[RMDB]
RNA sequence: GGGAACGACUCGAGUAGAGUCGAAAACGUGCCGUUUGCUCAGCUUCCCCUCGCCAUCUACCGGAGCCUUCCCGUGGAUGUGAAGGCCCGGGGGCUCUCGGGUCCGUAGAGGGUAGAACCAUGCACAUGUAGUGGAUUUAUUCGUAAAUCCACUACAAAAAGAAACAACAACAACAAC
Reactivity to DMS in 0.01 (KOAc 150mM, MgCl2 10mM, bicine 150mM(pH8.5), 24C), signal-to-noise 6, nucleotides 027 to 126: c140g020u000g010c020c110g010u010u000u000g010c040u010c080a120g000c140u000u000c080c000c000c050u000c030g000c060c030a060u010c050u010a160c020c050g000g000a040g010c050c040u010u010c020c020c030g020u020g020g010a070u000g010u010g020a160a110g010g000c000c000c010g010g000g000g000g020c040u000c000u010c050g010g010g000u010c110c090g010u010a080g020a050g000g010g020u000a050g010a060a090c100c060a090u000g010c070a060c100a170
Reactivity to 2A3 in 0.01 (KOAc 150mM, MgCl2 10mM, bicine 150mM(pH8.5), 24C), signal-to-noise 3, nucleotides 027 to 126: c020g030u050g030c040c040g050u010u110u150g050c050u040c090a070g010c040u030u030c010c010c000c000u010c010g030c000c010a050u000c020u070a090c010c020g010g010a040g040c010c030u140u150c030c020c000g060u160g030g000a060u050g070u120g220a100a040g160g000c000c000c000g000g000g010g030g000c000u000c020u040c040g040g010g000u010c020c010g000u040a060g000a010g010g000g010u000a050g020a010a000c020c010a080u140g020c040a050c020a080
The record gives the reactivity of an RNA of 177 nucleotides to DMS and 2A3. The reactions ran in a buffer of 150 mM KOAc, 10 mM MgCl2 and 150 mM bicine (pH 8.5), at 24 C. Reactivities are given for positions 27 through 126. DMS adducts were read by reverse transcription with MarathonRT. 2A3 adducts were read by reverse transcription with SuperScript II with manganese.